[RMDB]
RNA sequence: GGGAACGACUCGAGUAGAGUCGAAAAAAGCAGGCCCAUCUGUUGAGGAUGAAAAUGCGGAUGUUGAGAUGACCACGGACGCGCCCGCCACGGAUGUUGUGCAACCCCAGCCCAUUACACCCGACAACCAACGCAAUGUAUUCGUACAUUGCGUUGGAAAAGAAACAACAACAACAAC
Reactivity to 2A3 in 0.01 (KOAc 150mM, MgCl2 10mM, bicine 150mM(pH8.5), 24C), signal-to-noise 4, nucleotides 027 to 126: a010a000g130c050a040g020g030c030c020c000a010u020c030u070g080u130u110g110a070g060g010a040u080g090a110a020a000a030u100g010c000g010g000a060u080g040u070u050g050a060g000a120u110g010a100c000c010a010c040g040g000a010c000g010c000g020c030c000c000g050c030c010a020c040g040g010a050u010g040u140u040g050u060g000c020a020a050c000c000c000c000a000g020c000c010c020a010u040u110a020c030a060c010c010c010g040a020c010a050a040
Reactivity to DMS in 0.01 (KOAc 150mM, MgCl2 10mM, bicine 150mM(pH8.5), 24C), signal-to-noise 3, nucleotides 027 to 126: a140a030g020c020a070g000g000c230c040c020a020u010c000u000g000u040u050g000a190g000g030a040u060g000a020a040a150a070u010g000c040g020g020a130u010g010u010u020g030a130g030a110u010g020a080c050c030a080c090g000g020a100c050g000c050g000c020c010c000g000c040c030a040c000g040g000a050u060g000u000u000g000u000g020c020a020a060c040c010c030c020a090g000c040c000c010a060u020u030a070c050a100c020c020c000g020a120c240a070a080

An RNA of 177 nucleotides, treated with 2A3 and DMS and read out base by base.
For DMS, 3,716 sequencing reads were counted.